RNA sequence: GGGAACGACUCGAGUAGAGUCGAAAAACAGUUACGCCGUUUGUAGCUGUAAAGCCCACGGUUGUGGGGCGUAUCAACAGGUAGAAGGAAUAUAUCGAUGGCAGAGUGACGGUUUCGACCGUCACUCCGUUGCUAUUGUGUUCGCACAAUAGCAACGAAAAGAAACAACAACAACAAC
Reactivity to 2A3 in 0.01 (KOAc 150mM, MgCl2 10mM, bicine 150mM(pH8.5), 24C), signal-to-noise 3, nucleotides 027 to 126: a010c000a000g030u010u000a020c050g070c090c110g130u120u170u290g030u010a020g020c000u000g000u020a110a010a000g060c000c090c030a030c060g300g060u270u290g020u120g030g000g000g010c010g020u060a080u130c030a050a050c030a060g050g030u050a060g060a170a010g130g030a120a000u160a010u030a040u130c050g040a070u080g080g000c060a020g000a000g000u000g000a000c000g010g000u030u050u100c110g070a030c000c000g000u000c000a000c000u000c000
Reactivity to DMS in 0.01 (KOAc 150mM, MgCl2 10mM, bicine 150mM(pH8.5), 24C), signal-to-noise 4, nucleotides 027 to 126: a030c010a020g010u000u000a010c030g030c220c200g020u010u010u010g020u010a010g020c000u000g000u010a040a060a150g010c000c000c000a050c070g010g030u000u000g020u010g000g020g010g020c050g010u000a110u000c050a090a070c120a160g000g010u000a030g010a100a090g000g020a070a080u010a090u000a060u000c080g000a080u000g000g020c140a090g000a020g020u000g010a010c000g000g000u000u010u010c240g000a030c010c000g000u000c000a000c000u000c000
Record summary
Structure probing data (2A3 and DMS) for a 177-nucleotide construct. The 2A3 profile rests on 2,633 reads. 2A3 adducts were read by reverse transcription with SuperScript II with manganese. For DMS the reverse transcriptase was MarathonRT.